[RMDB]
RNA sequence: GGGAACGACUCGAGUAGAGUCGAAAAGGAACGUUGUUCGCAACGUUCCGUGCCGGAAACGGACAUGACGAUCGCGCGCAUCUCGGGAAACCGUAAACGCGAGCAUCAUGGUGUUCGCACCAUGAAACGAUAAACGCUUUUUCGAAAGCGUUUAUCGAAAAGAAACAACAACAACAAC
Reactivity to 2A3 in 0.01 (KOAc 150mM, MgCl2 10mM, bicine 150mM(pH8.5), 24C), signal-to-noise 4, nucleotides 027 to 126: g010g000a000a000c010g000u010u020g030u050u090c220g020c120a000a000c000g000u000u000c000c000g000u040g000c010c000g040g030a080a050a030c020g010g040a040c030a090u160g070a040c060g060a080u060c040g000c000g000c000g000c070a080u020c050u040c060g000g020g000a060a060a060c000c010g010u050a030a070a030c030g000c000g010a020g020c010a050u030c000a000u010g010g000u010g020u000u070c190g000c060a010c010c000a020u020g030a070a030a010
Reactivity to DMS in 0.01 (KOAc 150mM, MgCl2 10mM, bicine 150mM(pH8.5), 24C), signal-to-noise 6, nucleotides 027 to 126: g010g010a010a000c010g020u010u000g010u000u010c220g020c010a000a000c000g010u000u010c000c000g010u000g010c020c020g000g000a040a090a140c020g020g010a060c060a050u000g010a060c090g000a080u000c060g010c000g000c030g000c090a300u000c180u010c010g020g000g000a140a080a180c010c000g000u000a030a100a060c070g000c010g000a040g000c100a120u000c000a010u000g010g010u000g010u000u010c140g010c030a030c030c010a030u000g000a030a090a130
The record gives the reactivity of an RNA of 177 nucleotides to 2A3 and DMS. The 2A3 profile rests on 14,027 reads. The RNA was probed in 150 mM KOAc, 10 mM MgCl2 and 150 mM bicine (pH 8.5) at 24 C. Source: RMDB library M2PK50, as collected in RNAgym. For 2A3 the reverse transcriptase was SuperScript II with manganese.